Structure probing data (2A3 and DMS) for a 177-nucleotide construct.
For 2A3, 1,082 sequencing reads were counted.
RNA sequence: GGGAACGACUCGAGUAGAGUCGAAAAGCACACGAACCCGCGCCACUUGGGCUGAAAAUAUCCAUGUGGCAAUCAAUCAGGUCCGUUCAGUGAUUGGAGAAGAGAAGUAUGUGGAUUACAUGAGCUCGUUCUCCAUCUGGUUCGCCAGAUGGAGAACAAAAGAAACAACAACAACAAC
Reactivity to 2A3 in 0.01 (KOAc 150mM, MgCl2 10mM, bicine 150mM(pH8.5), 24C), signal-to-noise 2, nucleotides 027 to 126: g030c000a020c010a050c130g070a070a040c050c030c010g050c030g000c000c000a000c000u020u020g060g000g000c000u070g160a120a060a030a080u300a000u070c000c000a000u040g000u020g070g040c000a000a060u050c010a000a000u050c030a020g040g080u100c050c010g080u090u090c010a050g010u000g140a090u090u120g060g010a080g000a120a000g050a040g010a080a050g070u100a020u060g070u030g030g150a130u070u120a030c000a060u070g000a010g020c040u070c030
Reactivity to DMS in 0.01 (KOAc 150mM, MgCl2 10mM, bicine 150mM(pH8.5), 24C), signal-to-noise 2, nucleotides 027 to 126: g010c050a050c050a060c100g020a070a090c020c020c030g000c240g000c000c000a010c000u000u000g010g020g020c300u000g000a120a060a120a200u000a050u000c000c000a010u000g010u000g000g000c000a040a040u020c160a060a080u000c030a000g030g040u000c020c030g000u010u000c050a100g020u020g000a050u000u000g000g020a080g010a050a110g010a090g010a040a090g000u000a020u000g030u000g000g000a090u000u020a040c030a070u010g000a040g010c080u020c040